[RMDB]
An RNA of 177 nucleotides, treated with DMS and 2A3 and read out base by base.
Source: RMDB library RFMREP, as collected in RNAgym.
For 2A3 the reverse transcriptase was SuperScript II with manganese.
The reactions ran in a buffer of 150 mM KOAc, 10 mM MgCl2 and 150 mM bicine (pH 8.5), at 24 C.
For 2A3, 6,621 sequencing reads were counted.
The DMS profile rests on 6,054 reads.

RNA sequence: GGGAACGACUCGAGUAGAGUCGAAAACAUGUCAGUACUGGUGAGUCUGGAUGCUGAUGAUAUGUUAGUUCCCAUCAGCUCCAAGGCUGAUCAGUAGUGAUGUGAAACAAUGUCGUUCGCGACAUUGCUUACUCCGUAACUUCGGUUACGGAGUAAGAAAAGAAACAACAACAACAAC
Reactivity to DMS in 0.01 (KOAc 150mM, MgCl2 10mM, bicine 150mM(pH8.5), 24C), signal-to-noise 3, nucleotides 027 to 126: c010a000u000g000u000c000a030g000u000a010c010u010g020g000u000g000a020g010u000c000u000g000g000a030u010g020c010u000g000a020u010g010a110u010a080u020g010u000u010a170g000u000u000c070c040c000a040u000c000a000g000c010u000c000c030a040a060g000g010c010u010g000a000u000c020a020g000u000a020g000u000g000a000u000g010u000g010a180a070a230c010a010a000u000g020u000c000g030u000u010c200g000c030g000a010c000a000u000u000g010
Reactivity to 2A3 in 0.01 (KOAc 150mM, MgCl2 10mM, bicine 150mM(pH8.5), 24C), signal-to-noise 5, nucleotides 027 to 126: c000a010u010g000u020c010a020g280u000a000c000u010g030g000u040g090a010g000u010c000u010g000g030a060u270g000c010u000g000a010u000g010a040u040a060u300g260u180u130a160g060u150u080c000c010c000a000u000c000a000g000c000u030c000c020a110a110g030g000c010u090g170a010u020c000a000g000u000a010g030u010g000a010u010g010u000g030a010a010a000c010a010a010u020g000u010c010g010u050u100c230g010c010g070a000c010a010u000u010g010